Record summary: Chemical mapping of a 177-nucleotide RNA with 2A3 and DMS. For 2A3 the reverse transcriptase was SuperScript II with manganese.
RNA sequence: GGGAACGACUCGAGUAGAGUCGAAAAGGGCGUGAGUUCCUUUGGACCUUGCAGGUAUGUGGAUCCUGGUAGUAGUAGCAGCAAAGUGAGGUGAGAAUCCUUACCGCCGGAGGGGCUAGGGUUCCUUGAAUUCAUACUAAUUCGUUAGUAUGAAUUCAAAAGAAACAACAACAACAAC
Reactivity to 2A3 in 0.01 (KOAc 150mM, MgCl2 10mM, bicine 150mM(pH8.5), 24C), signal-to-noise 9, nucleotides 027 to 126: g040g010g010c060g050u160g060a080g050u090u120c010c000u020u030u050g050g010a040c010c000u010u070g050c040a030g040g030u140a070u180g070u110g050g030a050u050c010c010u020g050g000u020a040g010u000a000g000u020a020g020c050a000g000c030a050a070a040g020u030g030a010g000g010u010g010a040g030a010a030u030c000c000u000u020a030c010c020g020c010c010g010g010a040g010g030g010g000c000u020a020g050g020g010u020u030c010c000u010u010
Reactivity to DMS in 0.01 (KOAc 150mM, MgCl2 10mM, bicine 150mM(pH8.5), 24C), signal-to-noise 9, nucleotides 027 to 126: g000g000g010c040g010u020g000a140g010u000u010c010c010u000u010u010g010g010a100c040c020u000u010g020c060a070g000g010u010a050u010g020u020g010g000a070u010c030c020u000g010g010u010a080g020u000a060g010u000a070g010c060a070g000c070a040a070a130g010u010g000a020g010g010u000g000a170g000a190a100u010c010c010u000u000a040c030c110g000c030c040g000g000a090g010g010g000g000c050u000a060g010g000g010u000u000c020c030u000u010